[RMDB]
The record gives the reactivity of an RNA of 177 nucleotides to 2A3. Reactivities are given for positions 27 through 126. Source: RMDB library OK1LIB, as collected in RNAgym. Conditions: 150 mM KOAc, 10 mM MgCl2 and 150 mM bicine (pH 8.5), 24 C. For 2A3, 426 sequencing reads were counted.
RNA sequence: GGGAACGACUCGAGUAGAGUCGAAAACGAGCUGGCGGACGGCCGCAGCAGCCAGGAGCGGAAAAGGCGACGUCCACCGUUUGUGCUGCAGCGAUUUAGACACUCAUUCAAUGAAUGCUUGUCAGAGAAUCCGGUCCUACUUCGGUAGGACCGGAUUAAAAGAAACAACAACAACAAC
Reactivity to 2A3 in 0.01 (KOAc 150mM, MgCl2 10mM, bicine 150mM(pH8.5), 24C), signal-to-noise 1, nucleotides 027 to 126: c000g000a000g050c050u040g040g000c060g020g070a060c000g020g000c000c040g040c000a000g000c000a000g000c050c000a020g100g300a050g080c000g000g000a090a300a110a110g080g000c040g010a140c100g180u030c010c010a050c020c000g000u000u010u010g050u100g040c030u000g010c030a020g000c000g000a000u090u010u300a050g000a000c030a000c000u040c000a020u000u000c040a110a300u280g020a030a000u000g000c000u050u040g020u000c020a000g050a000g050